RNA sequence: GGGAACGACUCGAGUAGAGUCGAAAAUUGCUUUGCCGAACUUGUCGCACUUAGUAAAAGCCAUCGCGUUUGUAAGAGACAAGGAGAUGCUGAUGACGAUGAGAACAAGAUACAACAACUCGAACUUCAAAACGGCCAUUAUAGCCAAGACUGCCCAACCACAGGGAACAUUCGUGUUCCCUGUGGUAAAAGAAACAACAACAACAAC
Reactivity to DMS in 0.01 (KOAc 150mM, MgCl2 10mM, bicine 150mM(pH8.5), 24C), signal-to-noise 2, nucleotides 027 to 156: u010u000g040c000u020u000u010g040c020c000g010a080a150c030u000u000g000u000c000g010c120a130c030u000u020a110g010u000a040a030a070a110g040c040c020a170u010c060g000c050g000u000u000u000g020u000a110a130g010a130g020a090c050a080a110g000g020a090g000a100u000g000c060u000g010a110u020g020a050c040g000a160u020g000a100g000a080a100c000a120a080g010a110u000a090c040a090a130c060a100a090c060u000c030g010a080a180c080u000u000c060a050a080a090a100c090g030g090c100c030a080u000u000a110u000a060g000c020c010a090a070g020a050c040u000g020c020c000c000a110
Reactivity to 2A3 in 0.01 (KOAc 150mM, MgCl2 10mM, bicine 150mM(pH8.5), 24C), signal-to-noise 3, nucleotides 027 to 156: u070u040g000c020u040u020u040g010c010c000g020a080a050c030u010u010g010u030c020g000c080a070c100u040u080a020g050u150a060a060a070a000g020c040c070a140u130c050g000c040g050u030u060u090g100u040a050a020g040a000g000a060c020a030a010g010g000a070g000a020u060g020c030u040g010a100u090g030a030c030g040a050u120g010a000g010a050a020c030a110a020g040a060u210a080c070a120a010c010a070a030c060u060c070g050a080a040c040u060u080c050a010a000a080a150c030g010g020c000c010a000u090u100a040u110a050g000c000c010a030a010g010a070c040u060g000c010c030c000a000
Conditions: 150 mM KOAc, 10 mM MgCl2 and 150 mM bicine (pH 8.5), 24 C. An RNA of 207 nucleotides, treated with DMS and 2A3 and read out base by base. For DMS the reverse transcriptase was MarathonRT. Source: RMDB library OK3TST, as collected in RNAgym. Values cover nucleotides 27 to 156.